Overview: Structure probing data (DMS) for a 177-nucleotide construct. For DMS, 1,480 sequencing reads were counted. DMS adducts were read by reverse transcription with MarathonRT.
RNA sequence: GGGAACGACUCGAGUAGAGUCGAAAAACUCGGGCUUGAUCGGCGCGUUGAUGGUCAUUCCGGCGGGCAGGUUCAGGUCGGUCAUGGGGUUCUCCUGGGAAGAGAGGCGAAAGCCGAAGAGCAGUCCUACUAGCCCGUAAUUCGUUACGGGCUAGUAAAAAGAAACAACAACAACAAC
Reactivity to DMS in 0.01 (KOAc 150mM, MgCl2 10mM, bicine 150mM(pH8.5), 24C), signal-to-noise 1, nucleotides 027 to 126: a060c020u000c000g010g000g000c050u020u000g000a060u000c040g000g030c060g020c060g000u000u000g010a160u030g020g020u010c160a150u000u010c030c060g010g010c040g000g000g040c070a060g000g010u000u000c030a040g000g010u000c010g030g020u030c050a100u000g020g020g020g000u000u010c030u030c030c030u010g010g000g020a130a090g010a090g000a170g020g000c010g010a090a050a220g010c010c000g020a070a090g000a100g000c110a060g000u000c010c020